[RMDB]
Overview: Conditions: 150 mM KOAc, 10 mM MgCl2 and 150 mM bicine (pH 8.5), 24 C. Chemical mapping of a 207-nucleotide RNA with DMS and 2A3. Reactivities are given for positions 27 through 156. For DMS, 2,471 sequencing reads were counted.
RNA sequence: GGGAACGACUCGAGUAGAGUCGAAAAUCCUAAGUCCUCUUGGAUUUAAUGCUGUAAACUGUACUGGAGCUUCUCGGAAACGAGAAGCGUUGAAAGUACAGGAAGAAGGCAUUUGUCAGAGGAUAUGGAAAAACUCGCAUGGUUCGCCAUGCGAGAACAUACGUGAGAACUUCGGUUCUCACGUAUGAAAAGAAACAACAACAACAAC
Reactivity to DMS in 0.01 (KOAc 150mM, MgCl2 10mM, bicine 150mM(pH8.5), 24C), signal-to-noise 2, nucleotides 027 to 156: u000c010c000u000a120a210g030u000c020c020u000c000u010u000g050g010a070u000u010u000a020a040u010g010c030u000g030u000a040a150a300c010u000g000u000a000c000u000g000g000a270g000c000u000u000c010u000c010g050g010a160a130a300c030g050a000g020a010a000g010c050g000u000u040g000a140a200a070g000u000a000c010a070g010g000a030a120g000a100a300g010g000c000a020u000u020u020g010u010c030a090g000a020g020g070a020u000a120u010g010g000a070a100a100a090a100c000u000c000g000c000a000u010g000g020u010u020c230g010c050c010a000u000g040c000g020a000g000a080a110
Reactivity to 2A3 in 0.01 (KOAc 150mM, MgCl2 10mM, bicine 150mM(pH8.5), 24C), signal-to-noise 4, nucleotides 027 to 156: u010c000c000u020a090a030g040u000c010c010u010c030u140u240g120g020a060u300u230u180a010a000u010g000c020u020g000u010a010a010a010c000u000g010u010a000c010u000g000g020a020g000c000u010u000c000u010c000g030g030a120a090a060c010g000a000g000a010a010g000c010g000u050u010g000a000a000a000g000u000a000c000a000g010g000a000a070g000a000a000g000g000c010a000u020u000u000g000u000c000a000g000a000g010g000a000u020a040u070g010g030a030a080a050a070a060c000u000c000g000c000a000u000g010g060u060u090c260g020c090c000a000u000g000c010g000a000g000a000a000